Structure probing data (2A3 and DMS) for a 207-nucleotide construct. For DMS, 2,660 sequencing reads were counted.
[RMDB]
RNA sequence: GGGAACGACUCGAGUAGAGUCGAAAAGUUGAGAGCGUUUAACUUAAGUCUUUUUUAUUAGCUUAAACAAACUAUAUACAAGUGGUGGUAGUCCGCCACUCUAAGGGGACGCCUUUAGAAGAAGAGGGAAAGGCACUAAGCUUCGGCUUAGUGCCAAGGUAGUAUGUUUCUUCGGAAACAUACUACCAAAAGAAACAACAACAACAAC
Reactivity to 2A3 in 0.01 (KOAc 150mM, MgCl2 10mM, bicine 150mM(pH8.5), 24C), signal-to-noise 4, nucleotides 027 to 156: g080u090u090g040a050g010a040g080c050g010u050u070u130a090a070c020u090u080a060a020g060u170c040u090u210u080u070u050u090a200u140u150a070g000c000u050u080a050a010a020c010a010a040a020c030u060a050u050a050u040a280c060a120a000g000u000g010g000u010g020g060u060a080g110u060c010c000g000c010c000a010c010u000c010u020a010a010g030g000g000g030a010c040g080c030c010u020u090u080a050g010a140a000g030a050a010g040a070g020g040g010a030a080a190g030g000c000a000c010u000a000a000g000c010u040u070c210g030g000c000u000u000a000g000u000g000c000c000a000a000
Reactivity to DMS in 0.01 (KOAc 150mM, MgCl2 10mM, bicine 150mM(pH8.5), 24C), signal-to-noise 1, nucleotides 027 to 156: g030u000u010g000a150g000a060g020c070g030u000u010u010a100a080c070u010u010a060a130g010u020c030u010u000u000u000u000u000a090u050u000a050g020c020u000u000a170a070a150c060a050a020a060c020u010a130u010a170u010a110c050a030a130g020u000g000g060u000g050g040u000a120g010u010c000c000g010c000c010a010c020u000c000u000a020a050g030g010g020g000a080c150g030c010c020u010u010u000a020g000a050a070g010a110a110g000a100g000g030g000a070a090a130g010g000c000a020c010u020a010a020g010c020u010u010c300g040g000c000u010u000a020g040u000g030c000c000a010a000
The RNA was probed in 150 mM KOAc, 10 mM MgCl2 and 150 mM bicine (pH 8.5) at 24 C. It was measured as part of the RMDB library M2RFPK. DMS adducts were read by reverse transcription with MarathonRT.